[RMDB]
RNA sequence: GGGAACGACUCGAGUAGAGUCGAAAAAGUUUCAACAUCAGGGAGCGGUGGAGCUGCUUGUCUUCAAUUUUUUGCUCAUCCUUACCAUUUUGACAAUCUGGUUAUUUAAAAAUCAUCGAUUCCGCUUCUUGCAUGAAACUGGAGGAGCAAUGGUGUACGUCGUAAUGAGGUUCGCCUCAUUACGACGAAAAGAAACAACAACAACAAC
Reactivity to 2A3 in 0.01 (KOAc 150mM, MgCl2 10mM, bicine 150mM(pH8.5), 24C), signal-to-noise 1, nucleotides 027 to 156: a000g010u070u010u010c100a190a160c020a090u140c000a010g010g000g020a020g000c010g000g010u040g020g120a080g080c060u080g020c000u110u070g020u020c050u110u050c090a170a300u160u080u020u020u030u080g000c000u000c010a080u030c020c000u000u020a030c020c000a090u040u020u000u300g030a030c000a010a050u030c060u100g010g040u090u020a130u140u250u210a160a150a050a030a020u120c070a050u090c070g030a050u040u060c050c060g000c000u090u000c020u030u020g020c010a080u060g000a000a000a000c000u030g000g000a020g050g000a000g030c060a040a120u120g020g000u090g010u050a010